Structure probing data (DMS and 2A3) for a 177-nucleotide construct. DMS adducts were read by reverse transcription with MarathonRT. The data come from the RNA Mapping Database (RMDB), library OK2TST. For 2A3, 2,627 sequencing reads were counted. The reactions ran in a buffer of 150 mM KOAc, 10 mM MgCl2 and 150 mM bicine (pH 8.5), at 24 C.

[RMDB]
RNA sequence: GGGAACGACUCGAGUAGAGUCGAAAAGCACCGACAGAAUGAAACCGGCGAGGUAGCCGCCGACGGUGCCGUGCGCUUCGCCGUCGUGGGAGAGAUGCAUAUCGGCCAUUCAGAUCACGCUCGCGAACAUCCGUAAAUCGUUCGCGAUUUACGGAUGAAAAGAAACAACAACAACAAC
Reactivity to DMS in 0.01 (KOAc 150mM, MgCl2 10mM, bicine 150mM(pH8.5), 24C), signal-to-noise 3, nucleotides 027 to 126: g000c030a070c010c010g020a240c140a090g010a130a090u000g000a060a130a160c170c030g000g000c020g020a070g000g000u000a080g040c060c090g020c010c000g000a110c090g020g020u010g030c060c060g030u000g020c050g000c040u000u000c020g000c010c030g030u000c040g020u010g010g010g000a100g010a070g000a020u000g010c040a080u010a090u010c080g010g000c060c040a070u000u000c080a100g010a130u000c050a050c110g000c080u010c080g020c050g000a080a150
Reactivity to 2A3 in 0.01 (KOAc 150mM, MgCl2 10mM, bicine 150mM(pH8.5), 24C), signal-to-noise 3, nucleotides 027 to 126: g010c020a010c030c010g080a060c090a120g200a160a180u160g090a140a050a050c040c010g000g020c020g020a030g050g030u070a080g080c020c020g000c030c030g040a020c050g050g020u080g000c040c040g060u090g020c000g010c030u000u010c010g040c030c000g020u040c020g000u070g020g040g030a090g020a000g000a040u040g030c040a060u070a070u210c060g070g000c040c000a030u090u060c030a020g020a140u070c020a000c080g020c020u030c020g020c040g020a040a020